[RMDB]
RNA sequence: GGGAACGACUCGAGUAGAGUCGAAAAGGGGCUGACAGGAAUCGACAGUAGAGUGUAUCAUGUCAGUAAGCAUGCCGGGGAAUGGUGGUUUACCCCGUUACCAAAUGAUUACCGACCAAUAAUUGGCUUAGCUCGUUGGGCUUCGGCCCAACGAGAACAUUAGGGUUUGAUUCGUCAAACCCUAAUGAAAAGAAACAACAACAACAAC
Reactivity to DMS in 0.01 (KOAc 150mM, MgCl2 10mM, bicine 150mM(pH8.5), 24C), signal-to-noise 2, nucleotides 027 to 156: g000g000g020g040c030u000g010a090c050a060g010g020a100a130u000c030g010a060c020a090g000u000a110g030a140g050u010g000u000a130u030c070a120u010g000u000c020a040g000u000a030a100g010c030a060u000g020c150c050g030g040g030g030a060a080u010g020g040u000g020g020u010u000u000a160c030c000c000c000g050u000u000a070c050c020a060a080a070u000g020a140u010u000a050c020c000g020a040c030c060a070a150u000a050a110u010u010g010g000c020u000u000a080g020c010u000c000g010u010u000g000g000g000c000u000u000c280g070g000c000c000c000a010a000c000g030a000g010a020a110
Reactivity to 2A3 in 0.01 (KOAc 150mM, MgCl2 10mM, bicine 150mM(pH8.5), 24C), signal-to-noise 5, nucleotides 027 to 156: g000g010g010g000c010u000g010a010c020a040g030g060a070a070u150c100g070a040c050a040g150u250a050g060a080g080u090g010u030a070u080c040a040u050g020u010c010a010g020u040a050a010g050c030a030u130g060c040c000g000g000g010g000a040a050u050g030g010u010g030g000u030u030u120a090c010c000c000c000g020u040u050a020c000c030a020a040a040u090g020a030u060u070a040c020c040g090a050c020c060a040a050u230a170a070u100u070g040g010c060u090u090a030g030c000u000c000g010u000u000g000g000g000c010u030u040c200g090g000c000c000c000a000a000c000g000a000g000a000a000
Chemical mapping of a 207-nucleotide RNA with DMS and 2A3.
The RNA was probed in 150 mM KOAc, 10 mM MgCl2 and 150 mM bicine (pH 8.5) at 24 C.
For 2A3 the reverse transcriptase was SuperScript II with manganese.
2A3 is a SHAPE reagent: it acylates the 2'-hydroxyl of flexible nucleotides of all four kinds.
For DMS the reverse transcriptase was MarathonRT.